[RMDB]
RNA sequence: GGGAACGACUCGAGUAGAGUCGAAAACAGCCCCACCUCUUAGUAUUAUCACAUUGGGGGUUAGACUUUAACAUAAGAGCUUUGGUGGGGGGUACAGUAUUAAGUCCAUAGCACAAGGGGUGACACCCCCUUGGCUCUCGUUCGCGAGAGCCAAGGGAAAAGAAACAACAACAACAAC
Reactivity to DMS in 0.01 (KOAc 150mM, MgCl2 10mM, bicine 150mM(pH8.5), 24C), signal-to-noise 1, nucleotides 027 to 126: c160a300g000c020c000c000c040a070c030c020u020c040u000u000a040g000u000a070u020u020a050u010c050a100c100a150u030u040g000g000g060g020g020u010u040a150g000a120c080u000u030u000a020a070c090a150u000a140a110g010a120g030c290u000u000u000g030g030u000g000g050g030g000g040g060u000a090c090a100g020u000a050u000u020a040a070g010u000c020c050a020u020a100g010c060a180c040a020a050g000g000g000g010u000g000a130c240a020c080c010